[RMDB]
RNA sequence: GGGAACGACUCGAGUAGAGUCGAAAAUAUCGAGUAUAGCUUAGCAAACUAUACACUUGCCGCCAUGGCUGAACACUAUGUAGCCUGAGUACAGGAUGACCGACCAGUAAGAGUGUUCAUAAGUCCCGUCAGGGUUUAUGUUCGCAUAAACCCUGACAAAAGAAACAACAACAACAAC
Reactivity to DMS in 0.01 (KOAc 150mM, MgCl2 10mM, bicine 150mM(pH8.5), 24C), signal-to-noise 1, nucleotides 027 to 126: u020a080u010c090g010a090g010u010a010u000a010g000c010u010u000a270g000c070a270a050a080c020u000a000u010a000c000a210c220u000u000g010c000c000g010c070c020a040u010g000g030c000u020g000a010a030c020a020c020u000a000u010g050u000a030g000c060c000u010g000a080g000u000a040c020a070g000g000a080u010g000a050c070c050g000a120c050c030a040g000u010a040a150g000a000g000u000g020u000u000c010a030u000a040a040g040u010c000c000c300
Reactivity to 2A3 in 0.01 (KOAc 150mM, MgCl2 10mM, bicine 150mM(pH8.5), 24C), signal-to-noise 1, nucleotides 027 to 126: u130a040u100c000g000a020g010u000a000u010a000g010c010u050u030a010g040c070a020a040a000c010u000a000u000a000c030a020c040u050u130g000c000c030g120c100c110a230u240g000g010c000u010g030a000a010c000a000c040u060a030u160g110u140a050g060c030c000u040g020a080g060u100a160c030a080g040g000a080u170g200a170c030c040g020a010c030c000a000g000u010a050a020g040a000g060u020g010u020u000c000a000u050a100a020g080u030c050c010c000
This 177-nucleotide RNA was probed chemically with DMS and 2A3. 2A3 adducts were read by reverse transcription with SuperScript II with manganese. For 2A3, 1,607 sequencing reads were counted. Reactivities are given for positions 27 through 126. The DMS profile rests on 989 reads. For DMS the reverse transcriptase was MarathonRT.